[RMDB]
RNA sequence: GGGAACGACUCGAGUAGAGUCGAAAAAGGCUUAUCCCGGGGAACUCGGCGAAUCGUCCCCACAUAGCAGUUUCCAGGACCCCCUUCCAAAGGGAUGGAGGGGGGGGUUGGAACCACAGGGAACCCGCUAAUGUUAUGCGUUCGCGCAUAACAUUAGAAAAGAAACAACAACAACAAC
Reactivity to DMS in 0.01 (KOAc 150mM, MgCl2 10mM, bicine 150mM(pH8.5), 24C), signal-to-noise 1, nucleotides 027 to 126: a060g000g000c070u000u000a120u010c050c000c070g070g010g000g010a160a070c030u010c020g010g030c040g020a120a100u010c110g020u000c000c010c000c030a140c180a070u000a070g040c110a130g000u000u000u000c000c030a060g020g020a120c010c000c000c000c000u010u010c000c000a000a160a250g010g040g000a080u000g020g010a020g000g000g000g010g000g010g000g000u010u000g000g010a010a050c030c060a070c070a080g000g000g000a040a110c030c010c010g030
This 177-nucleotide RNA was probed chemically with DMS. Conditions: 150 mM KOAc, 10 mM MgCl2 and 150 mM bicine (pH 8.5), 24 C.